[RMDB]
RNA sequence: GGGAACGACUCGAGUAGAGUCGAAAAGAGUGACCCAGGCGCUAAGAGGCGCAGGAGGCAUCGGCGGGACCAGGGAGGGUGGCGCAGGUCACCCAUGGGCCCUGUUGAUCCGUACGUGCGACAAGGGAAAACAUCAAGACUUCGGUCUUGAUGUUUUAAAAGAAACAACAACAACAAC
Reactivity to 2A3 in 0.01 (KOAc 150mM, MgCl2 10mM, bicine 150mM(pH8.5), 24C), signal-to-noise 2, nucleotides 027 to 126: g070a030g060u120g060a040c010c000c040a080g050g020c000g000c050u160a220a080g060a200g260g080c040g020c000a010g080g110a070g040g060c030a020u100c110g030g000c030g000g010g000a030c030c000a010g010g030g020a100g000g000g020u000g000g010c020g000c040a010g140g190u020c000a010c010c000c000a020u040g030g060g020c030c000c000u020g020u020u150g020a100u000c000c000g030u070a120c020g000u020g040c020g070a070c030a060a060g070g000g000
Reactivity to DMS in 0.01 (KOAc 150mM, MgCl2 10mM, bicine 150mM(pH8.5), 24C), signal-to-noise 4, nucleotides 027 to 126: g000a120g020u000g000a170c020c000c030a200g010g000c030g020c010u000a100a100g000a190g030g000c040g040c020a080g000g010a140g010g000c070a020u000c050g000g000c010g000g000g000a100c060c010a020g000g010g020a140g000g000g020u010g010g000c000g010c300a100g000g010u000c000a010c000c000c000a050u000g030g010g010c000c000c010u000g010u010u010g000a030u000c010c010g010u000a070c090g020u000g020c010g010a130c080a100a130g010g010g000